[RMDB]
RNA sequence: GGGAACGACUCGAGUAGAGUCGAAAAGUUCUGUCAGUGGUGGCAGUACAAGUGAAAAUGAUUCAUGAUGCCAUCAGAAACAGGAAGAAGAGGUGAGUGGCAUGCAGGCUAUCUCUUGUUACAAAUAGAAAAACAUGGAAUAAUGCAGGUAACCUCACUCGGAUACCAUGUUCGCAUGGUAUCCGAGAAAAGAAACAACAACAACAAC
Reactivity to 2A3 in 0.01 (KOAc 150mM, MgCl2 10mM, bicine 150mM(pH8.5), 24C), signal-to-noise 1, nucleotides 027 to 156: g060u070u100c010u040g060u030c160a080g140u000g060g020u010g000g030c060a040g090u170a110c080a140a090g020u040g090a010a010a040a030u300g090a230u170u010c010a000u070g120a000u020g030c000c000a000u020c010a000g050a010a090a000c020a020g010g040a060a060g060a080a030g010a020g010g000u000g030a060g030u110g060g050c090a020u030g000c010a000g030g120c070u060a010u110c050u030c000u090u000g000u040u030a060c060a000a160a040u140a110g170a030a100a040a010a000c060a030u080g010g000a020a040u100a160a000u130g000c030a010g000g010u020a080a100c000c010u040c010a000